[RMDB]
RNA sequence: GGGAACGACUCGAGUAGAGUCGAAAAGGAAUCCGUCUCUCUGUCUGGUGCGGCAAGGUAGUUCUGGGUCCUUAGGGGCUCCACCUUCACCGCUGUUAGGGGAGUUUUAUCCAGCGUCAGCAAAGGUGACCCGUGAUGGAGGCGGCCGGGAUAGCACGAUAUAAUGACACUUCGGUGUCAUUAUAUCAAAAGAAACAACAACAACAAC
Reactivity to DMS in 0.01 (KOAc 150mM, MgCl2 10mM, bicine 150mM(pH8.5), 24C), signal-to-noise 1, nucleotides 027 to 156: g000g000a100a050u000c020c010g030u000c000u010c010u000c010u020g000u010c000u040g050g000u000g030c000g040g040c100a050a050g010g030u000a100g030u000u010c070u020g050g000g030u000c000c020u000u000a160g040g030g010g020c010u000c000c020a020c010c010u010u010c060a040c040c010g000c020u000g010u000u020a060g000g010g000g040a090g000u000u010u000u010a090u000c030c010a150g010c040g010u010c080a090g000c040a090a060a120g000g000u000g020a150c040c020c000g020u000g020a090u010g000g020a110g030g000c000g030g000c020c060g000g000g010a110u000a110g020c120a110c140
Reactivity to 2A3 in 0.01 (KOAc 150mM, MgCl2 10mM, bicine 150mM(pH8.5), 24C), signal-to-noise 2, nucleotides 027 to 156: g080g030a060a070u030c010c020g020u030c010u020c000u020c000u020g040u040c020u070g070g010u090g030c050g010g000c090a020a010g030g000u030a080g090u210u150c120u090g000g020g010u010c000c000u040u150a130g000g020g020g000c000u000c000c000a020c000c000u040u050c050a030c030c040g000c010u000g020u040u060a060g000g000g040g040a000g000u080u150u100u140a070u010c000c000a020g040c020g090u130c070a060g030c040a050a160a070g020g020u020g040a100c010c000c010g050u050g000a010u070g030g000a010g000g000c010g020g000c000c020g010g020g000a070u060a050g110c130a010c090
Overview: This 207-nucleotide RNA was probed chemically with DMS and 2A3. The reactions ran in a buffer of 150 mM KOAc, 10 mM MgCl2 and 150 mM bicine (pH 8.5), at 24 C. Source: RMDB library ARCHII, as collected in RNAgym. Reactivities are rounded to 0.1 and cut off at 0 and 3. For 2A3 the reverse transcriptase was SuperScript II with manganese. The 2A3 profile rests on 1,067 reads. 2A3 is a SHAPE reagent: it acylates the 2'-hydroxyl of flexible nucleotides of all four kinds.